The data come from the RNA Mapping Database (RMDB), library OK2TRN. Chemical mapping of a 177-nucleotide RNA with 2A3 and DMS.

[RMDB]
RNA sequence: GGGAACGACUCGAGUAGAGUCGAAAAGCAUCCAUGAUCGGCGCAUCCAUCAGGGCAUUCAGGAACAGCAUGACGUCGAACAGGUUCGACUUGCCGACGGCAUUGGCCCCGGCGAUGCAGGUGAAGGCUAGCAGCGUAAGUUCGCUUACGCUGCUAGAAAAGAAACAACAACAACAAC
Reactivity to 2A3 in 0.01 (KOAc 150mM, MgCl2 10mM, bicine 150mM(pH8.5), 24C), signal-to-noise 2, nucleotides 027 to 126: g040c010a060u030c030c010a020u100g050a060u120c020g070g040c050g040c040a010u010c020c000a090u110c020a070g060g090g000c060a030u090u080c080a080g050g110a140a100c020a030g140c000a020u020g020a020c020g030u020c010g010a070a080c010a040g030g070u080u160c100g090a100c000u020u030g030c020c000g000a010c000g000g000c000a040u080u140g140g000c050c010c000c000g000g000c070g010a010u030g020c040a020g020g060u080g060a060a050g110g020
Reactivity to DMS in 0.01 (KOAc 150mM, MgCl2 10mM, bicine 150mM(pH8.5), 24C), signal-to-noise 4, nucleotides 027 to 126: g010c120a110u000c030c020a120u010g010a070u000c060g010g020c160g010c080a030u000c060c040a120u000c120a070g010g000g030c020a090u030u000c110a140g000g020a090a070c160a100g000c090a030u000g000a050c070g000u010c010g000a060a110c050a030g000g010u000u000c140g000a070c010u000u000g020c070c000g030a040c060g000g000c010a090u000u020g010g000c000c010c020c020g030g000c140g000a030u000g020c020a090g010g000u020g010a100a140g000g000

2A3 is a SHAPE reagent: it acylates the 2'-hydroxyl of flexible nucleotides of all four kinds.